Structure probing data (DMS and 2A3) for a 207-nucleotide construct.
The DMS profile rests on 2,996 reads.
Reactivities are given for positions 27 through 156.
For 2A3 the reverse transcriptase was SuperScript II with manganese.
2A3 is a SHAPE reagent: it acylates the 2'-hydroxyl of flexible nucleotides of all four kinds.
Source: RMDB library M2RFPK, as collected in RNAgym.

[RMDB]
RNA sequence: GGGAACGACUCGAGUAGAGUCGAAAAGCUCUGUAAUGGGAUGGGAUCCGAAGCCCCAUUGAGGGAUAAUACAGGCUCUCCCAUCCAACUCCUAUUCCAACACGUCCUCGUCGUACAGAGGGGUAACUAAGGUAUAGCUCCUUCGGGAGCUAUACAAGAGGAACAUAUAGUUCGCUAUAUGUUCCUCAAAAGAAACAACAACAACAAC
Reactivity to DMS in 0.01 (KOAc 150mM, MgCl2 10mM, bicine 150mM(pH8.5), 24C), signal-to-noise 2, nucleotides 027 to 156: g000c010u010c030u000g000u000a090a080u000g010g040g020a010u000g010g040g030a060u020c030c010g020a170a200g000c050c000c000c040a300u020u000g000a120g010g010g010a070u000a140a220u030a120c120a200g000g010c020u000c070u000c000c030c000a100u000c030c000a060a030c010u020c040c020u000a130u010u000c030c030a150a080c090a110c080g010u000c000c030u000c030g000u000c070g010u010a090c090a050g010a080g000g020g030g040u000a080a100c070u000a070a090g030g010u000a010u000a000g000c000u000c000c000u000u000c300g070g020g040a000g020c000u000a000u000a000c000a090a120
Reactivity to 2A3 in 0.01 (KOAc 150mM, MgCl2 10mM, bicine 150mM(pH8.5), 24C), signal-to-noise 4, nucleotides 027 to 156: g010c000u030c040u080g100u100a090a120u200g070g010g010a010u020g000g000g020a060u230c020c020g010a040a030g040c010c010c010c030a120u110u210g070a280g010g000g020a020u070a110a020u140a240c130a050g000g000c000u000c000u000c020c000c010a000u000c000c000a000a000c010u030c010c000u030a070u070u070c030c000a030a030c040a010c070g080u060c020c020u040c020g120u020c040g020u070a020c020a050g040a020g020g010g000g020u070a130a060c080u030a110a050g060g000u000a000u000a000g000c010u000c000c000u010u010c040g050g000g000a010g000c000u000a000u000a000c000a000a000